[RMDB]
RNA sequence: GGGAACGACUCGAGUAGAGUCGAAAAAGCAGCGGAAGAGAGAGACGCUUGGAUGGCAGCAGCAGGCCUGAGCAACAGCUGACAGCAGGCAGGGGACAAGCUGUGCCUGCAGCCACAGCACCAACGGCACCAAGUCGAUGUUCGCAUCGACUUGGUGAAAAGAAACAACAACAACAAC
Reactivity to DMS in 0.01 (KOAc 150mM, MgCl2 10mM, bicine 150mM(pH8.5), 24C), signal-to-noise 2, nucleotides 027 to 126: a090g010c010a060g000c080g000g010a160a020g020a050g000a070g020a050g030a090c090g020c120u000u010g010g000a080u010g000g000c060a060g000c080a120g010c110a040g000g000c030c140u000g000a120g020c070a100a130c090a040g000c010u000g010a210c140a070g030c030a030g020g000c020a180g000g000g000g010a040c160a090a090g020c040u000g020u010g000c030c010u010g020c000a050g000c150c020a160c050a020g000c050a150c060c060a100a080c160g010g010
Reactivity to 2A3 in 0.01 (KOAc 150mM, MgCl2 10mM, bicine 150mM(pH8.5), 24C), signal-to-noise 2, nucleotides 027 to 126: a000g030c060a010g000c020g050g040a140a020g020a000g010a010g000a000g020a080c010g000c070u040u030g030g080a070u080g030g020c030a010g000c000a000g000c020a010g090g000c020c030u070g020a060g000c040a010a090c030a080g010c010u040g050a030c010a020g020c010a010g020g000c000a010g010g000g010g020a050c060a050a070g040c020u020g000u040g120c040c020u020g020c010a000g020c040c010a030c010a020g000c010a040c020c020a070a050c050g040g000
An RNA of 177 nucleotides, treated with DMS and 2A3 and read out base by base. Source: RMDB libraries RFM100 and RFMREP, as collected in RNAgym. The RNA was probed in 150 mM KOAc, 10 mM MgCl2 and 150 mM bicine (pH 8.5) at 24 C. Reactivities are given for positions 27 through 126. 2A3 adducts were read by reverse transcription with SuperScript II with manganese. The 2A3 profile rests on 2,168 reads.